Structure probing data (DMS and 2A3) for a 177-nucleotide construct. For 2A3, 1,401 sequencing reads were counted. The RNA was probed in 150 mM KOAc, 10 mM MgCl2 and 150 mM bicine (pH 8.5) at 24 C. Values cover nucleotides 27 to 126. The DMS profile rests on 2,268 reads.
[RMDB]
RNA sequence: GGGAACGACUCGAGUAGAGUCGAAAAUAGCCAAAAUCACUACAUCUAUCAUCCGUACGAUCAUGCUGUCAAGGUAUGAUCCGAAUAUGAAGAUUCACAACUUGACGAACCCACUGCUGAUAGACUGAUUACGUCAUCCGUUCGCGGAUGACGUAAUAAAAGAAACAACAACAACAAC
Reactivity to DMS in 0.01 (KOAc 150mM, MgCl2 10mM, bicine 150mM(pH8.5), 24C), signal-to-noise 3, nucleotides 027 to 126: u030a050g000c000c060a010a040a150a090u070c090a170c050u030a080c200a040u020c040u010a060u010c040a020u020c060c030g050u000a200c300g030a050u010c010a010u000g000c010u030g000u030c180a060a090g030g010u020a000u000g000a000u000c000c020g000a110a150u000a020u000g000a120a060g030a080u000u010c050a120c180a070a120c100u010u000g000a070c040g000a050a160c060c000c010a150c180u000g000c050u040g000a080u050a000g000a040c120u040g010
Reactivity to 2A3 in 0.01 (KOAc 150mM, MgCl2 10mM, bicine 150mM(pH8.5), 24C), signal-to-noise 4, nucleotides 027 to 126: u130a000g050c020c000a120a090a030a080u210c120a100c160u260a070c050a140u060c020u000a300u030c010a010u000c050c030g020u090a040c020g000a000u000c000a000u010g040c000u060g200u300c080a110a010g020g020u030a010u010g000a000u000c000c040g030a040a000u060a080u050g060a040a020g030a040u130u090c060a070c020a160a180c050u050u050g050a020c010g050a080a130c000c000c060a060c020u080g000c050u010g030a050u010a080g050a060c090u050g020